This 207-nucleotide RNA was probed chemically with 2A3.

[RMDB]
RNA sequence: GGGAACGACUCGAGUAGAGUCGAAAAUCCUUUCUCGAUAGAGAUUGGAGUCAUACAACCCCAGAAACCAUUCCUUAUACCUUGAGUAUUGCUGAAUUCAGUUUAGCGUGCAUGCUCUUGGCUAUACAUACCAAGGACAACUUCGGUUGUCCUUGAACACCGCUAAGCUGUUCGCAGCUUAGCGGUGAAAAGAAACAACAACAACAAC
Reactivity to 2A3 in 0.01 (KOAc 150mM, MgCl2 10mM, bicine 150mM(pH8.5), 24C), signal-to-noise 1, nucleotides 027 to 156: u010c000c000u010u000u000c130u030c030g160a280u300a230g040a000g000a000u000u000g000g000a030g060u050c000a050u100a210c020a010a170c000c000c000c000a020g220a130a100a030c100c030a220u210u270c010c010u030u000a000u000a060c000c000u000u090g000a000g000u090a150u240u040g000c000u030g090a070a080u120u170c070a130g140u100u230u100a150g000c040g120u160g000c030a010u000g000c000u000c000u000u010g000g000c000u020a000u020a010c080a060u040a030c020c020a000a000g000g000a010c000a020a020c000u080u100c260g010g000u000u000g000u000c000c000u000u000g000a000a000
The reactions ran in a buffer of 150 mM KOAc, 10 mM MgCl2 and 150 mM bicine (pH 8.5), at 24 C.